[RMDB]
Chemical mapping of a 177-nucleotide RNA with DMS. DMS (dimethyl sulfate) methylates the pairing face of unpaired adenines and cytosines. The RNA was probed in 150 mM KOAc, 10 mM MgCl2 and 150 mM bicine (pH 8.5) at 24 C. For DMS, 843 sequencing reads were counted. DMS adducts were read by reverse transcription with MarathonRT.
RNA sequence: GGGAACGACUCGAGUAGAGUCGAAAAAAAGAUAUGGAAGCGUUGCUUCGCGAAGAACUGUAUCGGACAGUAUUCGGAAACGAAUACCGAAAGUUACAGGGAGCGAAGCACCGCUUCCUAAGUCAAACUAUAUAUAGCCCUUCGGGGCUAUAUAUAGAAAAGAAACAACAACAACAAC
Reactivity to DMS in 0.01 (KOAc 150mM, MgCl2 10mM, bicine 150mM(pH8.5), 24C), signal-to-noise 1, nucleotides 027 to 126: a120a010a110g010a060u020a300u020g000g010a020a010g020c000g000u030u000g000c000u000u000c000g020c000g020a150a230g010a150a160c020u000g020u000a030u010c000g000g000a300c060a040g010u000a010u010u010c000g020g040a120a060a110c000g010a020a000u000a000c050c040g000a020a140a230g000u000u000a020c010a020g020g000g000a020g010c000g000a070a000g000c000a000c010c020g020c000u000u000c000c000u000a010a050g020u000c020a100a130a260